[RMDB]
RNA sequence: GGGAACGACUCGAGUAGAGUCGAAAAGGAGAAGCUGACAAAUCAGAUCUACCAGAACACCACAAAGAUCUCGGAGUACUACAUUGCGGAUGAGUCCCUGAAGGUGGACAUUGACAAGCUGGGCAGACUGACUCCAUCAUUUCGAUGAUGGAGUCAGAAAAGAAACAACAACAACAAC
Reactivity to 2A3 in 0.01 (KOAc 150mM, MgCl2 10mM, bicine 150mM(pH8.5), 24C), signal-to-noise 1, nucleotides 027 to 126: g090g000a040g020a120a070g050c020u020g000a050c090a080a160a180u040c010a010g010a060u020c010u040a220c010c040a000g030a020a000c040a020c030c020a060c030a000a080a000g060a050u000c020u020c050g030g030a040g080u090a050c000u030a030c020a080u000u140g040c080g020g000a020u030g040a020g020u000c020c020c020u100g060a070a030g040g040u060g020g040a030c020a030u110u130g010a030c000a030a030g030c000u040g010g000g020c000a010g020a030
Reactivity to DMS in 0.01 (KOAc 150mM, MgCl2 10mM, bicine 150mM(pH8.5), 24C), signal-to-noise 2, nucleotides 027 to 126: g020g000a120g030a130a130g000c040u000g010a110c150a080a090a130u010c000a050g000a080u000c020u010a110c080c030a120g010a060a090c110a040c060c020a020c090a040a140a070g000a050u000c070u000c040g010g020a120g000u030a040c060u030a120c110a080u000u000g000c090g010g020a120u000g000a100g020u020c070c070c070u000g030a080a080g020g030u020g000g000a070c020a070u020u010g010a050c110a060a080g010c050u000g000g010g030c100a090g010a140
Source: RMDB library OK2TST, as collected in RNAgym. The record gives the reactivity of an RNA of 177 nucleotides to 2A3 and DMS. The RNA was probed in 150 mM KOAc, 10 mM MgCl2 and 150 mM bicine (pH 8.5) at 24 C. For 2A3 the reverse transcriptase was SuperScript II with manganese. The 2A3 profile rests on 1,213 reads.